[RMDB]
RNA sequence: GGGAACGACUCGAGUAGAGUCGAAAAACGGAUGGUACGCCAUCCGACCAUUGGGUAGAAGCGUUCAAUCAGCACCGUGACGGUGCAGAUGGGAAAUUGUCCAUGAUACGCACCAUACGUGGUGCGAAAAAGCCAUCGGUGUUCGCACCGAUGGCAAGAAAAGUCUUAUCUUCGGAUAAGACUUUUCAAAAGAAACAACAACAACAAC
Reactivity to 2A3 in 0.01 (KOAc 150mM, MgCl2 10mM, bicine 150mM(pH8.5), 24C), signal-to-noise 4, nucleotides 027 to 156: a010c000g000g000a010u000g000g020u080a040c210g040c040c000a000u000c000c000g010a010c010c020a080u050u090g050g000g000u070a070g030a120a020g020c040g040u040u070c060a060a060u020c030a020g000c010a010c000c020g090u150g190a130c180g010g000u000g000c010a000g000a020u030g000g020g030a010a120a080u090u060g030u000c020c000a010u100g040a050u100a080c020g000c000a010c000c000a010u040a100c230g080u050g010g000u010g010c000g010a030a000a000a000a010g000c000c000a000u000c000g000g010u010g030u050u060c150g000c080a000c010c000g000a000u000g000g000c000a000a000
Reactivity to DMS in 0.01 (KOAc 150mM, MgCl2 10mM, bicine 150mM(pH8.5), 24C), signal-to-noise 2, nucleotides 027 to 156: a080c040g000g010a030u000g010g040u020a100c300g060c020c010a000u000c000c010g030a030c040c050a300u010u040g020g030g020u000a060g000a060a140g050c070g010u010u000c020a090a060u000c050a110g000c000a030c010c000g030u000g020a160c200g030g040u010g000c000a010g010a050u000g010g000g010a030a140a080u000u000g000u000c010c020a180u010g030a110u000a020c030g010c000a000c010c010a090u000a060c200g070u010g000g000u000g030c000g010a000a020a060a080a130g000c020c010a020u010c040g020g070u020g010u000u020c230g040c000a030c000c000g000a000u000g010g040c000a000a010